[RMDB]
Chemical mapping of a 177-nucleotide RNA with DMS and 2A3.
The reactions ran in a buffer of 150 mM KOAc, 10 mM MgCl2 and 150 mM bicine (pH 8.5), at 24 C.
Reactivities are rounded to 0.1 and cut off at 0 and 3.
RNA sequence: GGGAACGACUCGAGUAGAGUCGAAAAGCCUGUAGUCCCAACUACUCGGAAGGCUGAGGUGGGAGGAUCCCUUGAGAUGGGGAAAUCAAGGCUGCAGUGAGCCAUGAUAGUUCCACUGCACUCCAGCCCUUCACCCAGUAUUCGUACUGGGUGAAGGAAAAGAAACAACAACAACAAC
Reactivity to DMS in 0.01 (KOAc 150mM, MgCl2 10mM, bicine 150mM(pH8.5), 24C), signal-to-noise 2, nucleotides 027 to 126: g020c030c020u010g000u000a040g000u000c040c030c040a110a130c060u000a090c030u000c140g000g010a120a110g010g020c030u010g010a050g000g020u000g010g020g000a060g000g010a090u000c060c010c010u010u000g000a110g020a140u030g000g000g020g010a050a070a100u010c040a060a070g000g010c200u000g020c000a070g000u010g020a090g000c030c070a130u010g010a050u040a100g010u000u000c060c020a040c000u000g000c030a060c060u000c020c000a070g020c080
Reactivity to 2A3 in 0.01 (KOAc 150mM, MgCl2 10mM, bicine 150mM(pH8.5), 24C), signal-to-noise 2, nucleotides 027 to 126: g030c020c010u040g000u030a040g060u020c020c000c020a020a080c040u150a030c010u010c060g110g050a170a080g150g000c030u040g030a040g000g030u030g000g020g010a020g000g020a050u000c010c030c000u010u010g090a130g010a110u130g020g010g000g000a040a160a090u030c030a040a000g010g020c030u050g010c030a050g050u030g130a000g000c020c030a050u100g050a110u090a030g050u060u000c080c020a020c010u010g000c010a010c020u050c010c030a070g000c020
The data come from the RNA Mapping Database (RMDB), library OK2TRN. DMS adducts were read by reverse transcription with MarathonRT. Reactivities are given for positions 27 through 126. The DMS profile rests on 2,049 reads. The 2A3 profile rests on 2,292 reads.